[RMDB]
RNA sequence: GGGAACGACUCGAGUAGAGUCGAAAAAGCCAAUCGCCCUGGGUGGCAACGUGUUCAAGUCGGAAUGGUGGCGCUAUUACGGAGACAGCGACAAGGCGCACGAGCCGCGCCCGGACAAGUUCGAAUAUACGUUCAUCACGGCGGACACCGCGCAGAACACACAUGUACUGUUCGCAGUACAUGUGUGAAAAGAAACAACAACAACAAC
Reactivity to DMS in 0.01 (KOAc 150mM, MgCl2 10mM, bicine 150mM(pH8.5), 24C), signal-to-noise 1, nucleotides 027 to 156: a190g000c020c000a050a120u000c070g020c030c000c010u000g000g040g050u000g050g000c060a030a040c050g000u000g040u010u000c100a060a160g090u000c000g020g000a140a120u010g000g010u040g000g010c000g030c010u000a070u010u000a170c080g010g020a150g000a050c090a150g000c030g040a140c040a150a050g010g000c030g020c000a170c080g000a130g000c130c050g000c010g000c000c000c000g010g030a010c040a040a120g010u000u010c060g010a030a040u000a060u000a040c080g030u000u000c020a040u000c060a050c050g020g020c030g000g040a070c030a070c020c010g020c050g000c090a120g000a100a130
Reactivity to 2A3 in 0.01 (KOAc 150mM, MgCl2 10mM, bicine 150mM(pH8.5), 24C), signal-to-noise 3, nucleotides 027 to 156: a010g060c050c040a010a120u160c100g030c030c020c010u090g080g050g020u100g090g000c040a060a030c020g020u070g020u060u050c130a160a130g010u020c010g100g000a140a100u060g030g000u020g010g040c010g000c020u010a010u130u040a090c050g050g010a030g010a040c020a050g040c000g090a030c070a050a030g000g000c010g040c010a020c120g100a050g070c030c040g010c040g000c000c030c000g030g020a030c030a090a090g050u010u030c010g040a080a010u090a020u030a130c010g020u060u140c000a040u030c020a010c010g020g000c000g000g000a000c010a010c020c000g000c000g020c020a030g090a190a010
Structure probing data (DMS and 2A3) for a 207-nucleotide construct. The 2A3 profile rests on 2,040 reads. For 2A3 the reverse transcriptase was SuperScript II with manganese. The reactions ran in a buffer of 150 mM KOAc, 10 mM MgCl2 and 150 mM bicine (pH 8.5), at 24 C. Values cover nucleotides 27 to 156.